Structure probing data (2A3 and DMS) for a 177-nucleotide construct. For DMS, 1,559 sequencing reads were counted. DMS adducts were read by reverse transcription with MarathonRT. Reactivities are given for positions 27 through 126.
[RMDB]
RNA sequence: GGGAACGACUCGAGUAGAGUCGAAAACAUGUUUUGUGGUGCCUUGGGCGAGCGAUUGUCUCGCAAGUUGGUCAACGACUGCUGGCGCUGCACGCCAUUGGAUCCACUAACCUGCCGUUGGCCAUGCCGAUAGCCCCUGGUUCGCCAGGGGCUAUCGAAAAGAAACAACAACAACAAC
Reactivity to 2A3 in 0.01 (KOAc 150mM, MgCl2 10mM, bicine 150mM(pH8.5), 24C), signal-to-noise 3, nucleotides 027 to 126: c060a030u190g080u020u070u080u020g120u050g000g020u010g090c000c010u060u070g150g140g000c000g000a000g010c010g290a300u170u300g040u140c000u010c010g000c000a050a050g060u020u000g030g000u020c010a090a000c000g000a020c030u050g020c080u080g020g000c060g030c050u110g000c070a010c080g030c070c000a050u040u090g050g030a000u020c020c000a060c060u060a030a170c000c020u060g010c020c040g010u030u040g010g000c000c000a060u160g060c100
Reactivity to DMS in 0.01 (KOAc 150mM, MgCl2 10mM, bicine 150mM(pH8.5), 24C), signal-to-noise 1, nucleotides 027 to 126: c020a070u040g000u000u000u000u060g010u000g050g030u010g000c200c000u000u050g000g000g010c000g000a090g000c100g010a200u000u010g000u060c000u070c020g000c000a130a040g030u070u010g050g000u000c080a000a050c080g050a030c010u000g000c120u000g000g030c040g040c030u050g000c080a120c080g050c040c020a130u000u060g000g000a100u000c030c000a020c040u020a170a060c150c050u000g020c000c010g000u000u000g000g000c000c000a070u020g020c130

2A3 adducts were read by reverse transcription with SuperScript II with manganese.